[RMDB]
This 177-nucleotide RNA was probed chemically with DMS and 2A3. 2A3 adducts were read by reverse transcription with SuperScript II with manganese. Reactivities are given for positions 27 through 126. The reactions ran in a buffer of 150 mM KOAc, 10 mM MgCl2 and 150 mM bicine (pH 8.5), at 24 C.
RNA sequence: GGGAACGACUCGAGUAGAGUCGAAAAGCUAAGUAGUUCGCUACUUAGCAAAUUAAAUCAGCGGUUAAAAAGGAGGCGUUAUAACCGCUGAACGCCUCCUUAAAAGUGUGCGCUUCGGCGCACACAACACCAUUAAGGUGUUCGCACCUUAAUGGUGAAAAGAAACAACAACAACAAC
Reactivity to DMS in 0.01 (KOAc 150mM, MgCl2 10mM, bicine 150mM(pH8.5), 24C), signal-to-noise 2, nucleotides 027 to 126: g000c000u000a000a010g010u000a000g000u000u010c250g020c000u000a000c000u000u000a010g000c000a030a030a070u010u000a050a110a060u010c060a050g020c030g000g000u000u000a040a060a120a020a040g000g010a030g010g000c000g000u020u000a070u000a060a130c040c050g010c040u010g010a000a010c020g000c000c010u000c010c010u000u000a020a070a100a100g020u000g040u000g010c000g020c000u000u020c170g020g000c010g080c020a020c000a000c000a010a210
Reactivity to 2A3 in 0.01 (KOAc 150mM, MgCl2 10mM, bicine 150mM(pH8.5), 24C), signal-to-noise 2, nucleotides 027 to 126: g000c000u000a000a010g000u000a000g030u040u080c200g030c100u000a000c000u010u000a000g000c000a010a010a000u060u020a010a000a020u090c020a010g030c010g110g080u100u210a130a120a040a020a030g020g000a000g000g000c000g000u020u030a060u040a150a050c010c020g010c020u000g010a000a000c000g000c010c020u020c000c000u020u040a050a080a010a020g010u000g000u000g010c030g010c000u020u090c190g040g010c000g040c000a010c000a000c010a000a000